[RMDB]
This 207-nucleotide RNA was probed chemically with 2A3 and DMS. 2A3 adducts were read by reverse transcription with SuperScript II with manganese. The 2A3 profile rests on 2,520 reads. The reactions ran in a buffer of 150 mM KOAc, 10 mM MgCl2 and 150 mM bicine (pH 8.5), at 24 C. As a SHAPE reagent, 2A3 marks flexible, mostly unpaired nucleotides at the ribose 2'-OH.
RNA sequence: GGGAACGACUCGAGUAGAGUCGAAAAGGGGUCAGAGACAUGGGUCCCUUGUAGCGUUGAAAUAUACUGAAGCCUCCACGGUAUAUGGAGCUACUUGGGACCCAACAGCUCUGACGGAGGCACCCAAAACCUAGUGUGCGUUCGCGCACACUAGGAACAAUAGCAGGUGAUUCGUCACCUGCUAUUGAAAAGAAACAACAACAACAAC
Reactivity to 2A3 in 0.01 (KOAc 150mM, MgCl2 10mM, bicine 150mM(pH8.5), 24C), signal-to-noise 3, nucleotides 027 to 156: g020g030g120g000u010c010a000g020a020g140a060c300a300u300g010g010g000u060c000c000c030u000u010g000u010a010g000c030g050u140u030g000a010a010a000u010a000u000a000c010u020g030a130a000g010c010c000u010c000c010a000c010g000g000u000a000u000a000u030g000g010a020g060c000u050a000c000u000u010g010g050g000a000c180c000c140a000a020c020a000g000c000u000c000u000g000a000c010g000g000a000g010g000c000a030c000c010c010a030a090a070a080c000c000u000a000g000u000g000u000g000c010g010u010u080c210g030c010g020c110a000c000a000c000u000a010g000g000a000a000
Reactivity to DMS in 0.01 (KOAc 150mM, MgCl2 10mM, bicine 150mM(pH8.5), 24C), signal-to-noise 1, nucleotides 027 to 156: g020g000g060g010u000c050a010g040a060g020a080c030a140u010g040g020g030u010c010c010c000u000u000g030u010a010g020c000g050u010u020g000a260a140a050u000a010u000a010c000u010g010a040a150g000c040c000u000c000c020a300c050g000g010u010a000u000a020u020g020g010a150g010c000u000a010c020u020u010g010g020g020a010c010c000c010a010a010c010a160g040c000u000c010u000g020a000c020g000g000a030g160g040c000a190c040c000c020a080a120a090a140c000c010u000a000g030u000g030u010g010c020g000u000u010c300g040c020g060c010a010c000a000c000u010a000g010g000a020a060